[RMDB]
RNA sequence: GGGAACGACUCGAGUAGAGUCGAAAAUUGACUCUUACAAAGCGAUAGUUGUAGGAGUAUUAGUCUUACUAUCGCACUAUUGUACAUAAGACUAGGAGUUGCUAUUGCGUACAAUAGAUGGCAACUGGCACAGCAGGCUAUUCGUAGUCUGUUGUGCAAAAGAAACAACAACAACAAC
Reactivity to 2A3 in 0.01 (KOAc 150mM, MgCl2 10mM, bicine 150mM(pH8.5), 24C), signal-to-noise 9, nucleotides 027 to 126: u070u110g020a010c000u000c000u000u000a000c000a000a010a010g000c000g000a000u000a000g010u000u000g000u000a000g000g010a010g010u010a010u020u080a010g010u000c030u040u100a060c000u010a000u000c000g000c000a000c000u000a000u010u020g000u000a000c010a030u140a160a090g080a090c030u040a040g120g040a060g060u020u010g010c010u030a030u100u200g050c040g000u010a000c000a010a010u010a020g060a000u010g050g000c000a010a010c020u020g050
Reactivity to DMS in 0.01 (KOAc 150mM, MgCl2 10mM, bicine 150mM(pH8.5), 24C), signal-to-noise 9, nucleotides 027 to 126: u010u010g010a030c000u000c000u000u000a010c000a010a010a250g010c000g000a010u000a010g020u000u000g000u000a000g000g000a020g010u000a050u010u000a080g010u010c110u000u000a140c000u000a000u000c000g010c000a020c030u000a010u000u000g000u000a010c020a120u010a090a110g010a110c120u000a100g010g010a100g010u000u000g010c020u000a120u010u010g010c140g010u000a010c030a010a020u000a020g000a010u000g010g000c040a020a030c030u000g010